An RNA of 207 nucleotides, treated with 2A3 and read out base by base.

RNA sequence: GGGAACGACUCGAGUAGAGUCGAAAAGGGGUCGUCACUUUGUAUGGUCGGGGGGAGUCCUGAAGCCUCCACGGGACAUCGAUCUCUCUAGCGUGCCAUGGUGACGACGGAGGCACCCAAAGUUUUUCUGUUAUUGUUCGCAAUAACAGAAAAACAAGAGCCAUAUUGUGUUCGCACAAUAUGGCUCAAAAGAAACAACAACAACAAC
Reactivity to 2A3 in 0.01 (KOAc 150mM, MgCl2 10mM, bicine 150mM(pH8.5), 24C), signal-to-noise 2, nucleotides 027 to 156: g130g000g060g000u010c000g000u000c000a000c010u130u270u300g160u280a090u100g000g060u060c160g030g000g000g000g030g010a010g000u000c010c010u010g020a090a010g000c010c000u000c010c020a010c000g010g000g000a000c010a160u240c160g120a120u030c030u000c010u000c020u070a130g190c060g280u300g000c090c010a040u050g000g020u000g000a000c000g000a000c000g000g000a010g000g000c000a010c030c000c010a000a070a030g010u000u000u000u000u000c000u000g010u000u000a010u000u000g060u020u060c260g000c160a000a000u000a010a000c000a000g000a010a000a000a000a000c000a000a030
Annotation: For 2A3, 2,097 sequencing reads were counted. The RNA was probed in 150 mM KOAc, 10 mM MgCl2 and 150 mM bicine (pH 8.5) at 24 C.